[RMDB]
RNA sequence: GGGAACGACUCGAGUAGAGUCGAAAAAGGUUGUAAGGACGUCGUGCCACUGCGCCGCCUCCUCCAGCAGCGCGGCAGAGUAUUUGUAGCCGUGCGACGGGUGCCGCGCAAGGACGUACAGCACGAAAUAUGGUGGAUUAUUCGUAAUCCACCAUAUAAAAGAAACAACAACAACAAC
Reactivity to DMS in 0.01 (KOAc 150mM, MgCl2 10mM, bicine 150mM(pH8.5), 24C), signal-to-noise 9, nucleotides 027 to 126: a080g010g010u000u000g020u000a080a110g010g000a120c090g010u000c030g010u010g010c020c070a210c110u000g000c030g020c000c160g010c020c040u010c020c030u000c060c090a140g010c130a180g010c010g010c010g010g020c020a100g010a090g010u000a100u010u000u010g020u000a130g000c020c010g020u000g010c010g010a100c140g020g010g010u000g010c030c170g010c030g010c020a060a060g010g010a070c080g010u000a060c100a140g000c030a040c060g010a060a100
Reactivity to 2A3 in 0.01 (KOAc 150mM, MgCl2 10mM, bicine 150mM(pH8.5), 24C), signal-to-noise 5, nucleotides 027 to 126: a000g120g020u080u030g040u070a060a090g080g030a020c030g040u030c010g020u060g060c020c010a080c050u010g000c010g000c020c000g000c010c020u040c010c010u120c060c020a080g050c040a030g000c060g000c000g010g010c000a020g030a030g100u160a220u190u200u160g110u100a030g010c010c010g000u020g010c010g000a010c010g000g000g030u050g000c010c000g010c010g000c040a020a030g060g030a010c040g020u070a040c030a030g010c020a000c030g020a080a090